Structure probing data (2A3 and DMS) for a 177-nucleotide construct. DMS (dimethyl sulfate) methylates the pairing face of unpaired adenines and cytosines. Reactivities are given for positions 27 through 126. The data come from the RNA Mapping Database (RMDB), library M2PK50. DMS adducts were read by reverse transcription with MarathonRT.

[RMDB]
RNA sequence: GGGAACGACUCGAGUAGAGUCGAAAAGUAAAUACUUUCGAGUAUUUACAAAGAACGCUGCAACGCGCAGCGCGCUCGCCAGAGCACGCCGCAGCAAAAUAAAAACUGCUGGAUUCGUCCAGCAGAAGAUUUAGCGAGAAUUCGUUCUCGCUAAAUCAAAAGAAACAACAACAACAAC
Reactivity to 2A3 in 0.01 (KOAc 150mM, MgCl2 10mM, bicine 150mM(pH8.5), 24C), signal-to-noise 2, nucleotides 027 to 126: g000u010a030a000a010u010a000c010u060u080u140c170g040a010g000u010a030u020u000u010a010c010a000a100a010g060a090a000c070g000c050u030g000c060a140a090c150g060c040g000c150a010g030c010g020c000g000c020u030c010g040c050c080a070g000a000g000c010a010c020g030c020c020g000c000a020g000c000a090a040a050a050u110a030a060a040a030a020c000u010g000c000u010g000g010a030u030u040c130g060u000c030c010a000g000c000a000g000a010a010
Reactivity to DMS in 0.01 (KOAc 150mM, MgCl2 10mM, bicine 150mM(pH8.5), 24C), signal-to-noise 2, nucleotides 027 to 126: g000u010a000a010a020u010a020c000u000u010u000c140g020a040g000u000a000u010u010u000a000c000a060a100a150g010a130a110c090g010c020u010g010c070a100a080c080g020c130g020c130a080g000c010g020c030g010c010u010c010g010c190c220a100g000a030g020c000a000c010g000c000c010g040c020a060g000c010a130a020a060a060u020a080a040a040a070a130c010u000g000c020u000g000g000a050u000u010c130g020u000c000c000a010g000c000a000g000a030a040